[RMDB]
An RNA of 177 nucleotides, treated with 2A3 and DMS and read out base by base.

RNA sequence: GGGAACGACUCGAGUAGAGUCGAAAAAAGUAAGCCAAUCCCAAAAAACCAAAGGCUGAAUAUUUUCUCUGAUAUGUGGAUGCUUUUCCAAAAUUGGGAUGGGGGAGGGAGCAUAGGAGGAAUAGAGCGUAUGUCUGUUAUUCGUAACAGACAUACGAAAAGAAACAACAACAACAAC
Reactivity to 2A3 in 0.01 (KOAc 150mM, MgCl2 10mM, bicine 150mM(pH8.5), 24C), signal-to-noise 2, nucleotides 027 to 126: a000a000g030u040a000a020g000c000c000a020a050u040c020c000c000a130a090a080a010a000a040c040c050a070a030a010g030g000c000u020g030a050a010u080a070u090u070u040u030c030u020c030u070g080a070u030a070u240g090u050g080g030a070u080g050c020u060u070u050u130c070c040a050a050a120a270u100u110g030g000g070a040u060g030g020g020g010g020a110g000g040g020a050g030c010a010u070a090g010g030a020g000g050a040a040u060a100g140a020g030
Reactivity to DMS in 0.01 (KOAc 150mM, MgCl2 10mM, bicine 150mM(pH8.5), 24C), signal-to-noise 4, nucleotides 027 to 126: a030a080g010u000a100a070g020c030c020a110a130u010c010c010c000a000a060a080a090a120a120c120c110a060a080a080g010g020c010u010g000a130a080u000a030u000u000u010u010c020u010c040u010g000a100u000a030u010g020u000g010g010a060u010g020c090u000u000u020u010c050c060a040a070a090a110u000u010g020g000g010a120u000g010g010g000g000g010a100g000g000g000a080g040c110a050u000a080g000g000a050g010g000a060a070u000a070g000a110g010
Source: RMDB library OK2TST, as collected in RNAgym. Reactivities are given for positions 27 through 126. DMS adducts were read by reverse transcription with MarathonRT. The RNA was probed in 150 mM KOAc, 10 mM MgCl2 and 150 mM bicine (pH 8.5) at 24 C.